The data come from the RNA Mapping Database (RMDB), library TTRDES. Structure probing data (2A3 and DMS) for a 177-nucleotide construct. Reactivities are given for positions 27 through 126. DMS adducts were read by reverse transcription with MarathonRT.
RNA sequence: GGGAACGACUCGAGUAGAGUCGAAAAAAAAAGAUAUGGAUCAUGUGUUACAGCUUAGCAAGGAGUGUACGUCGGAAACGACGUACCUCUGAUGACCUAAGAAGGUGGCAUGAUCCUAAGUCAAAAACUGAGUGAUAUACUUCGGUAUAUCACUCAGAAAAGAAACAACAACAACAAC
Reactivity to 2A3 in 0.01 (KOAc 150mM, MgCl2 10mM, bicine 150mM(pH8.5), 24C), signal-to-noise 2, nucleotides 027 to 126: a000a000a000a000a000g030a030u020a020u060g000g010a010u010c000a000u010g050u040g090u300u240a050c000a010g000c020u020u020a010g000c020a110a090g020g020a020g030u300g030u130a010c000g010u000c000g000g050a010a010a020c000g000a000c000g010u000a000c010c010u000c000u000g000a010u010g000a000c000c010u010a010a040g000a050a000g130g000u040g030g040c010a000u000g000a000u000c000c000u000a010a000g020u000c040a010a000a010a150a240
Reactivity to DMS in 0.01 (KOAc 150mM, MgCl2 10mM, bicine 150mM(pH8.5), 24C), signal-to-noise 2, nucleotides 027 to 126: a070a070a060a070a090g010a030u000a030u010g000g010a010u000c000a010u000g010u000g000u000u010a030c060a170g000c000u000u000a000g000c000a050a020g000g000a020g010u020g010u000a010c000g020u000c000g010g000a010a000a050c000g000a010c000g020u000a000c000c010u000c000u000g000a040u010g000a200c300c000u000a000a000g000a030a030g010g010u000g000g010c000a000u000g000a020u000c000c000u010a000a040g000u010c000a080a050a050a090a090